An RNA of 177 nucleotides, treated with 2A3 and DMS and read out base by base. High DMS reactivity at an A or C suggests that its Watson-Crick edge is free. The 2A3 profile rests on 10,483 reads. Values cover nucleotides 27 to 126. As a SHAPE reagent, 2A3 marks flexible, mostly unpaired nucleotides at the ribose 2'-OH. For DMS the reverse transcriptase was MarathonRT. For 2A3 the reverse transcriptase was SuperScript II with manganese.

[RMDB]
RNA sequence: GGGAACGACUCGAGUAGAGUCGAAAAGCACGUAGGUUCAGAUGAUGGGCCCGCAUCUGUACGAAAGUAGGACGAAAGUCUAGCCUACGUGCAUGAGCACGCGGGCCCCGUGCUCUACUGCAAAAGACACCAUACGUGAUUUCGAUCACGUAUGGUGAAAAGAAACAACAACAACAAC
Reactivity to 2A3 in 0.01 (KOAc 150mM, MgCl2 10mM, bicine 150mM(pH8.5), 24C), signal-to-noise 3, nucleotides 027 to 126: g020c000a000c000g010u000a000g000g010u010u020c000a000g000a020u020g000a030u080g000g000g000c000c000c010g000c010a010u000c000u000g000u010a010c010g030a090a050a040g010u020a010g010g000a000c010g080a150a010a000g010u000c000u000a000g000c010c000u000a000c000g000u000g000c010a000u000g000a000g010c000a000c000g000c020g000g000g000c000c000c000c010g000u010g000c000u000c000u030a080c030u040g110c050a050a060a030a050g070a040
Reactivity to DMS in 0.01 (KOAc 150mM, MgCl2 10mM, bicine 150mM(pH8.5), 24C), signal-to-noise 2, nucleotides 027 to 126: g030c010a010c000g010u000a010g000g030u020u000c000a000g010a020u000g000a050u020g000g000g000c010c010c010g000c000a010u010c010u000g000u000a000c010g000a120a100a190g000u000a030g000g000a010c000g000a130a100a160g020u000c000u010a030g030c000c000u000a020c020g030u000g000c000a000u010g000a110g000c000a000c000g010c150g000g010g000c000c000c000c000g000u000g000c000u000c000u020a190c040u000g020c160a110a080a080a090g010a290